[RMDB]
About this RNA
This 177-nucleotide RNA was probed chemically with DMS and 2A3. 2A3 adducts were read by reverse transcription with SuperScript II with manganese. For DMS the reverse transcriptase was MarathonRT. It was measured as part of the RMDB library OK1LIB. The 2A3 profile rests on 19,117 reads. The RNA was probed in 150 mM KOAc, 10 mM MgCl2 and 150 mM bicine (pH 8.5) at 24 C.
RNA sequence: GGGAACGACUCGAGUAGAGUCGAAAACAAACACCAGCGCCCAGGAAGAAAAACCAAAACGUGAACUACUUGACCAAACACGAACGCUAGUGUAAUUCGGCAAGAAACAAAAACAAAACAAACAAAACGAUGAUAUAUAGUUCGCUAUAUAUCAUCGAAAAGAAACAACAACAACAAC
Reactivity to DMS in 0.01 (KOAc 150mM, MgCl2 10mM, bicine 150mM(pH8.5), 24C), signal-to-noise 5, nucleotides 027 to 126: c150a150a100a120c140a090c020c020a050g030c020g010c010c020c010a080g000g000a060a050g010a080a060a050a090a060c100c050a050a030a070a060c110g010u010g000a110a060c090u020a040c030u000u000g010a100c030c020a030a080a040c050a020c020g010a110a100c060g020c030u020a050g020u010g010u020a040a080u020u030c060g010g000c050a050a080g000a070a040a030c160a070a040a060a090a100c180a060a060a070a060c150a100a100a080c150a050a050a060a090
Reactivity to 2A3 in 0.01 (KOAc 150mM, MgCl2 10mM, bicine 150mM(pH8.5), 24C), signal-to-noise 9, nucleotides 027 to 126: c000a000a080a000c040a030c020c020a010g010c000g020c010c010c010a010g070g030a050a070g060a020a090a020a020a020c070c040a050a070a020a030c050g050u080g050a040a030c030u100a040c010u110u050g050a130c020c010a040a080a020c020a000c030g060a160a010c060g030c120u090a090g010u030g020u090a070a110u100u080c020g020g000c020a040a020g020a080a060a010c080a030a100a030a010a000c070a050a090a020a010c090a050a100a010c040a030a090a010a000